[RMDB]
RNA sequence: GGGAACGACUCGAGUAGAGUCGAAAACACAGCCUUUAUUACAGGAGCAGUUAUUCAAUGGAGCUGUGACUUUCCAACAACAAGGAAAUGUUUCUAUACCUGUAUUUAACCAGCAAUCACAACAAUACUAUACUGCACUGUUCGCAGUGCAGUAUAGAAAAGAAACAACAACAACAAC
Reactivity to 2A3 in 0.01 (KOAc 150mM, MgCl2 10mM, bicine 150mM(pH8.5), 24C), signal-to-noise 3, nucleotides 027 to 126: c050a010c030a020g020c030c010u110u180u080a110u040u050a020c010a040g020g040a030g040c010a020g050u160u130a090u180u220c080a070a120u090g040g020a030g020c000u010g010u030g020a030c010u040u000u000c030c000a000a020c050a020a000c010a050a100g070g000a050a010a050u150g010u010u030u000c050u030a110u040a090c000c000u010g020u010a060u030u090u050a060a060c050c010a020g040c040a060a070u120c070a060c040a200a030c020a050a090u100a160
Reactivity to DMS in 0.01 (KOAc 150mM, MgCl2 10mM, bicine 150mM(pH8.5), 24C), signal-to-noise 2, nucleotides 027 to 126: c050a080c100a080g000c060c020u000u000u010a030u040u000a050c070a040g000g010a140g010c050a040g030u000u010a110u010u000c200a090a090u000g030g020a100g040c020u000g010u000g000a050c080u000u020u000c000c000a090a110c140a080a080c300a120a090g040g010a020a030a050u010g000u000u000u000c080u010a090u000a080c000c010u000g010u010a030u020u000u010a080a050c090c080a060g020c070a060a060u010c130a050c110a040a030c180a030a060u000a080
Chemical mapping of a 177-nucleotide RNA with 2A3 and DMS.
Source: RMDB library OK2TST, as collected in RNAgym.
For 2A3 the reverse transcriptase was SuperScript II with manganese.
The reactions ran in a buffer of 150 mM KOAc, 10 mM MgCl2 and 150 mM bicine (pH 8.5), at 24 C.
The 2A3 profile rests on 2,386 reads.